This 177-nucleotide RNA was probed chemically with DMS and 2A3.
2A3 adducts were read by reverse transcription with SuperScript II with manganese.
The RNA was probed in 150 mM KOAc, 10 mM MgCl2 and 150 mM bicine (pH 8.5) at 24 C.
It was measured as part of the RMDB library OK2TRN.

[RMDB]
RNA sequence: GGGAACGACUCGAGUAGAGUCGAAAACGUCUCGCGCCUGCUCAGGGCAACGAUAUGGCGCCAGUCAGACCAAGCAGCAAUACGAUCCCGGGCAAUAGGUUGGUCACUUGGUGCGUGACGAUGCUGGAAGCAUUAAAAGCUUCGGCUUUUAAUGCUUAAAAGAAACAACAACAACAAC
Reactivity to DMS in 0.01 (KOAc 150mM, MgCl2 10mM, bicine 150mM(pH8.5), 24C), signal-to-noise 5, nucleotides 027 to 126: c050g000u000c010u000c040g020c060g030c010c010u010g000c100u000c090a140g020g010g000c050a040a090c050g000a150u010a100u010g000g010c110g020c030c060a090g000u000c120a120g010a140c070c020a090a080g010c030a120g010c040a080a080u020a090c070g000a090u000c010c000c000g020g000g010c030a110a080u000a080g000g000u000u010g010g010u000c070a120c070u000u000g020g010u000g000c040g010u000g000a030c010g010a090u010g010c050u000g000g010
Reactivity to 2A3 in 0.01 (KOAc 150mM, MgCl2 10mM, bicine 150mM(pH8.5), 24C), signal-to-noise 2, nucleotides 027 to 126: c020g010u010c010u000c000g000c020g020c000c010u060g030c030u060c100a170g000g060g000c050a050a070c020g030a030u030a060u300g090g000c000g020c040c030a040g080u100c070a040g030a070c020c000a000a040g070c030a010g030c020a060a090u080a120c050g030a060u040c000c010c000g000g020g000c060a130a100u080a160g130g040u020u070g040g030u010c010a000c080u030u080g000g000u030g010c000g000u010g000a010c010g030a050u120g040c010u060g060g100